Structure probing data (2A3 and DMS) for a 177-nucleotide construct. Conditions: 150 mM KOAc, 10 mM MgCl2 and 150 mM bicine (pH 8.5), 24 C. DMS adducts were read by reverse transcription with MarathonRT. 2A3 adducts were read by reverse transcription with SuperScript II with manganese.

RNA sequence: GGGAACGACUCGAGUAGAGUCGAAAACACUGGACUCAGAGACAUCAAGGGGGGAGUCCUCGAGGAUCCAGAGACGGAGUAUCGUCCCAGUACGAUAACCCUCCCUCUAUUUUUCUCCAAGACAGACACUAUUCCAGUGGUUCGCCACUGGAAUAGUAAAAGAAACAACAACAACAAC
Reactivity to 2A3 in 0.01 (KOAc 150mM, MgCl2 10mM, bicine 150mM(pH8.5), 24C), signal-to-noise 1, nucleotides 027 to 126: c040a010c010u010g000g170a050c010u000c050a030g040a010g010a150c000a190u140c160a300a300g100g000g000g000g000g000a020g030u000c030c010u000c010g050a040g040g020a040u040c070c000a000g010a010g040a000c090g000g010a050g060u040a010u010c010g010u070c000c060c000a020g010u080a010c000g010a000u030a120a090c000c000c000u030c030c020c000u040c020u040a210u060u170u040u020u000c070u000c000c040a050a000g020a070c010a000g030a010c040
Reactivity to DMS in 0.01 (KOAc 150mM, MgCl2 10mM, bicine 150mM(pH8.5), 24C), signal-to-noise 2, nucleotides 027 to 126: c140a270c040u000g030g000a100c010u010c030a050g000a200g000a080c160a050u010c120a110a160g030g000g000g000g000g010a120g000u000c010c040u000c110g030a060g020g000a090u000c040c020a010g010a060g020a100c160g000g000a100g050u000a010u000c020g000u000c020c130c180a160g030u010a020c020g000a040u000a030a130c060c060c030u000c010c000c000u000c020u010a030u000u020u000u010u000c000u000c020c060a080a150g000a120c100a090g000a090c230